[RMDB]
RNA sequence: GGGAACGACUCGAGUAGAGUCGAAAAGCGUGGAGAGAGGGCCGCGGUGCUCUGGAGUAGAGGCUCUGCCUUCGAAACACCAUCGAUCGUCCCUUCUUCUUUACCUUCUUCUGGCUCUUCCGAUGAGACGCGACCGGUGGCAUCACCUCUCGGUUCGGACUAAGUUACUGUUCGCAGUAACUUAGUCAAAAGAAACAACAACAACAAC
Reactivity to 2A3 in 0.01 (KOAc 150mM, MgCl2 10mM, bicine 150mM(pH8.5), 24C), signal-to-noise 4, nucleotides 027 to 156: g100c110g010u010g010g000a000g000a000g000a000g010g010g010c010c000g040c010g010g000u010g000c000u000c000u020g010g000a000g000u000a000g000a020g020g000c040u090c250u300g050c050c000u170u210c010g000a010a000a000c010a020c160c000a000u000c000g090a300u040c000g000u010c000c000c000u050u040c010u030u000c000u000u010u010a000c000c000u020u020c070u050u000c050u120g010g000c000u000c000u020u010c010c020g060a090u130g030a040g030a030c040g000c020g040a010c000c000g010g000u010g000g010c080a110u090c040a120c020c000u010c020u070c030g050g000u080u080c060g030
Reactivity to DMS in 0.01 (KOAc 150mM, MgCl2 10mM, bicine 150mM(pH8.5), 24C), signal-to-noise 1, nucleotides 027 to 156: g000c120g020u010g010g030a050g000a200g000a050g010g040g080c090c040g050c040g050g040u000g000c030u020c000u000g000g000a250g010u000a130g010a180g000g030c010u010c110u000g030c050c000u000u000c020g050a260a200a300c020a040c170c000a050u000c020g000a030u000c050g000u030c010c020c000u040u000c010u000u000c100u000u010u000a030c030c010u000u000c050u000u030c010u010g010g040c040u000c050u000u000c040c000g000a230u000g000a120g060a100c030g030c040g010a220c020c030g020g000u000g000g030c060a130u000c040a090c040c010u000c040u000c020g000g030u000u010c040g020
This 207-nucleotide RNA was probed chemically with 2A3 and DMS. The reactions ran in a buffer of 150 mM KOAc, 10 mM MgCl2 and 150 mM bicine (pH 8.5), at 24 C. It was measured as part of the RMDB library VIROID. 2A3 adducts were read by reverse transcription with SuperScript II with manganese.